[RMDB]
RNA sequence: GGGAACGACUCGAGUAGAGUCGAAAAGGGAGAUCCGAGCAGAGGCAUAGCGAACUGCGCACGGUGAAGCCUUGAGGGAAGGCCGUAGGACCCGGGUUCGAUUCCCGGCUGCUCCACCGAAGGGCCAGAUACCCACGUCAUUCGUGACGUGGGUAUCAAAAGAAACAACAACAACAAC
Reactivity to 2A3 in 0.01 (KOAc 150mM, MgCl2 10mM, bicine 150mM(pH8.5), 24C), signal-to-noise 3, nucleotides 027 to 126: g060g030g030a070g000a040u010c010c000g010a010g000c010a010g010a070g120g010c100a170u100a170g040c040g080a110a070c010u020g000c040g040c030a070c090g020g020u020g030a050a030g030c000c000u010u000g050a050g000g010g040a050a100g000g000c020c020g060u060a060g020g060a040c000c000c000g000g000g000u010u040c010g030a030u070u050c000c000c000g000g000c000u050g000c040u020c010c010a060c000c000g040a010a020g000g000g020c000c000a010
Reactivity to DMS in 0.01 (KOAc 150mM, MgCl2 10mM, bicine 150mM(pH8.5), 24C), signal-to-noise 3, nucleotides 027 to 126: g010g000g000a020g000a080u010c000c030g000a120g000c050a050g030a120g000g000c050a120u050a130g000c130g000a050a040c030u000g000c010g000c140a170c050g030g020u030g010a210a210g000c010c000u000u000g000a220g010g060g010a080a130g000g010c010c030g020u030a070g000g000a110c100c010c000g000g000g000u020u010c170g030a300u020u020c000c000c000g040g030c130u030g050c070u010c030c020a130c040c100g030a130a070g000g040g000c020c010a100
Structure probing data (2A3 and DMS) for a 177-nucleotide construct. For 2A3 the reverse transcriptase was SuperScript II with manganese. The 2A3 profile rests on 2,934 reads. The DMS profile rests on 3,524 reads.